The data come from the RNA Mapping Database (RMDB), library OK2TRN. The record gives the reactivity of an RNA of 177 nucleotides to 2A3 and DMS. For DMS the reverse transcriptase was MarathonRT.
[RMDB]
RNA sequence: GGGAACGACUCGAGUAGAGUCGAAAAUACAUCAUGGUACCUACUGAUCGAUCAGUACGAUCCGAGAUCGUGGUACGACGCGAUCGCGCGCGCUCGUGCGCGUACCGUACACGGCGCUGGCCACUGGCCCCUGCAUACCCUUCGGGGUAUGCAGGGGAAAAGAAACAACAACAACAAC
Reactivity to 2A3 in 0.01 (KOAc 150mM, MgCl2 10mM, bicine 150mM(pH8.5), 24C), signal-to-noise 2, nucleotides 027 to 126: u160a020c070a070u140c020a060u130g000g000u060a060c010c010u040a050c030u070g030a030u090c100g030a040u080c050a020g040u070a060c070g020a050u020c030c060g060a040g020a170u020c000g010u070g070g040u030a070c030g030a040c030g010c000g030a030u050c010g010c020g010c000g010c000g000c080u120c170g090u110g000c050g020c030g010u020a020c000c060g000u020a030c060a010c110g000g030c030g040c120u040g080g020c020c020a050c060u070g080g020
Reactivity to DMS in 0.01 (KOAc 150mM, MgCl2 10mM, bicine 150mM(pH8.5), 24C), signal-to-noise 2, nucleotides 027 to 126: u010a060c110a070u000c070a080u010g000g010u000a090c070c060u000a070c070u000g020a060u000c090g000a110u000c010a060g010u000a050c140g010a050u010c010c110g010a080g000a060u000c070g020u010g000g000u000a020c030g010a100c010g000c020g000a030u000c060g000c100g030c070g010c010g010c110u020c090g050u010g000c020g000c040g020u000a000c120c030g020u010a050c070a070c100g000g000c060g010c050u000g000g010c040c040a060c090u000g000g010